[RMDB]
RNA sequence: GGGAACGACUCGAGUAGAGUCGAAAAGACUGCCUGGCGUGCAGAGCGAGAUCGGUGCCAGGAGGCCUUUCUCAGGGCAUCCGUUGUGGAUGACGAAACGGGGUCAGUACCAACGCCAGGGACUGACAGUAUCGGUACCAUUCGUGGUACCGAUACUAAAAGAAACAACAACAACAAC
Reactivity to DMS in 0.01 (KOAc 150mM, MgCl2 10mM, bicine 150mM(pH8.5), 24C), signal-to-noise 4, nucleotides 027 to 126: g000a120c040u020g010c000c010u000g010g000c010g000u000g040c010a070g020a040g000c120g020a140g010a140u020c080g000g020u000g000c000c010a020g020g010a060g000g010c100c080u000u010u030c020u000c040a140g010g000g000c010a020u020c000c030g020u010u030g020u010g000g020a050u020g000a070c070g010a030a070a070c120g020g010g000g030u010c010a000g020u000a050c000c010a100a070c070g020c100c100a050g000g000g000a030c000u000g000a040c060
Reactivity to 2A3 in 0.01 (KOAc 150mM, MgCl2 10mM, bicine 150mM(pH8.5), 24C), signal-to-noise 5, nucleotides 027 to 126: g060a030c070u110g180c040c000u020g010g010c030g040u220g080c070a040g060a030g090c110g110a080g010a100u060c040g020g030u030g080c020c010a040g050g000a030g020g040c000c000u060u120u030c040u000c020a040g060g070g000c010a010u040c030c000g060u110u110g090u160g070g040a080u050g040a060c050g110a060a050a060c060g050g060g000g000u000c010a000g020u050a150c000c000a090a050c080g050c040c000a040g000g000g020a020c020u030g010a000c000